RNA sequence: GGGAACGACUCGAGUAGAGUCGAAAACAAGAUUAAAUGAAGCAAACUAACUUCGAUUGUUGCGUUCUGCAUAGGAGUUAGGGAUUUUACAGAACGAUAAGCAUGUAGUGGUCAAUUCGUAAUUUGCCAAGGACGAGAGUUCAAUUCUCUCCACCUCGUACUUUGAUAGCUUCGGCUAUCAAAGUACAAAAGAAACAACAACAACAAC
Reactivity to 2A3 in 0.01 (KOAc 150mM, MgCl2 10mM, bicine 150mM(pH8.5), 24C), signal-to-noise 5, nucleotides 027 to 156: c010a010a010g060a100u190u190a070a060a180u210g070a040a020g020c040a090a040a020c010u010a000a000c000u010u000c030g150a250u230u230g040u050u070g030c020g020u060u070c050u120g020c020a020u070a060g030g000a010g000u010u020a010g020g010g010a020u010u080u110u170a040c020a020g020a020a010c020g040a060u040a120a010g030c020a020u060g040u090a010g000u010g030g010u020c010a020a050u040u040c020g070u100a030a140u050u060u150g040c040c010a030a020g010g020a020c080g000a000g000a000g000u050u190c060a060a070u190u010c000u000c000u030c000c010a040c010c020u060c070
Reactivity to DMS in 0.01 (KOAc 150mM, MgCl2 10mM, bicine 150mM(pH8.5), 24C), signal-to-noise 2, nucleotides 027 to 156: c000a140a090g020a130u000u010a010a050a060u000g010a070a110g000c020a090a160a180c080u000a050a000c020u000u000c000g000a110u000u000g010u000u000g020c010g000u000u000c070u030g030c040a110u010a240g000g010a050g020u000u010a050g030g020g010a110u010u010u000u020a130c060a100g000a020a060c080g000a030u000a080a070g000c040a060u000g000u000a070g000u000g030g000u000c000a050a080u000u010c130g010u000a080a120u000u010u000g040c000c040a070a060g000g000a150c100g000a020g010a040g030u010u010c150a080a300u000u000c010u000c000u000c010c030a160c030c020u010c080
An RNA of 207 nucleotides, treated with 2A3 and DMS and read out base by base. For 2A3, 2,912 sequencing reads were counted. DMS adducts were read by reverse transcription with MarathonRT. Source: RMDB library ARCHII, as collected in RNAgym. The DMS profile rests on 2,376 reads.